[RMDB]
Chemical mapping of a 207-nucleotide RNA with 2A3. For 2A3, 434 sequencing reads were counted. As a SHAPE reagent, 2A3 marks flexible, mostly unpaired nucleotides at the ribose 2'-OH. It was measured as part of the RMDB library M2RFPK. For 2A3 the reverse transcriptase was SuperScript II with manganese. The reactions ran in a buffer of 150 mM KOAc, 10 mM MgCl2 and 150 mM bicine (pH 8.5), at 24 C.

RNA sequence: GGGAACGACUCGAGUAGAGUCGAAAACUCAAUGUAGGGAAUAACAUUGAAUUGAUACCAAUACCUUUUUCGGUGUAGGGAAAAACACCGAAUUGAUACAAAUACCUUUCUCAAUGUAGGGAAUAACAAAACAGGCAUCGCUUCGGCGAUGCCUGAACAUGGGGGUAUACUUCGGUAUACCCCCAUGAAAAGAAACAACAACAACAAC
Reactivity to 2A3 in 0.01 (KOAc 150mM, MgCl2 10mM, bicine 150mM(pH8.5), 24C), signal-to-noise 1, nucleotides 027 to 156: c030u000c000a000a000u070g090u120a150g000g160g070a160a230u170a130a040c000a000u000u000g000a050a070u080u050g060a010u110a120c010c000a010a050u080a080c000c000u070u000u000u030u020c000g000g040u000g010u010a000g040g010g010a000a140a210a000a000c000a000c000c000g000a030a030u030u050g050a010u000a040c090a000a110a020u110a050c000c040u020u060u110c040u070c060a010a110u230g040u120a050g050g040g050a050a070u030a010a090c070a110a040a000a030c000a000g010g010c000a030u000c000g040c030u000u130c210g000g000c000g010a000u000g040c080c000u010g000a000a000